[RMDB]
RNA sequence: GGGAACGACUCGAGUAGAGUCGAAAAUGAAAGCGCGAACUCAGCCGAAAGGCACCGCGAAGAAAAACAGGAUGACGCGCAUCCCACAUCCAGCGGACUCACGCAGAGACGCGGAAGACAAAAAAAACUACAUAGUAGCGUUCGCGCUACUAUGUAGAAAAGAAACAACAACAACAAC
Reactivity to 2A3 in 0.01 (KOAc 150mM, MgCl2 10mM, bicine 150mM(pH8.5), 24C), signal-to-noise 1, nucleotides 027 to 126: u120g030a030a060a010g020c010g000c020g000a070a050c020u020c120a040g020c000c070g050a040a060a030g030g010c030a040c100c030g050c050g050a140a110g050a020a180a030a010a020c040a020g100g000a010u040g060a030c000g040c010g020c020a030u060c020c000c020a020c000a070u000c010c020a010g000c010g070g120a190c010u030c010a050c070g080c120a070g000a000g000a030c000g000c000g010g000a030a020g070a020c190a000a200a000a000a000a000a000a050
Reactivity to DMS in 0.01 (KOAc 150mM, MgCl2 10mM, bicine 150mM(pH8.5), 24C), signal-to-noise 1, nucleotides 027 to 126: u000g040a110a180a130g030c010g010c030g090a050a140c260u030c080a080g020c000c000g000a030a220a040g010g010c000a090c120c040g010c070g020a160a140g030a020a110a160a010a200c180a090g020g000a040u000g010a190c050g000c020g010c010a090u000c000c000c000a070c120a070u000c050c000a050g070c010g000g000a230c080u000c030a120c140g000c200a150g000a070g010a120c010g000c010g000g030a070a140g010a110c050a000a000a000a120a020a040a120a160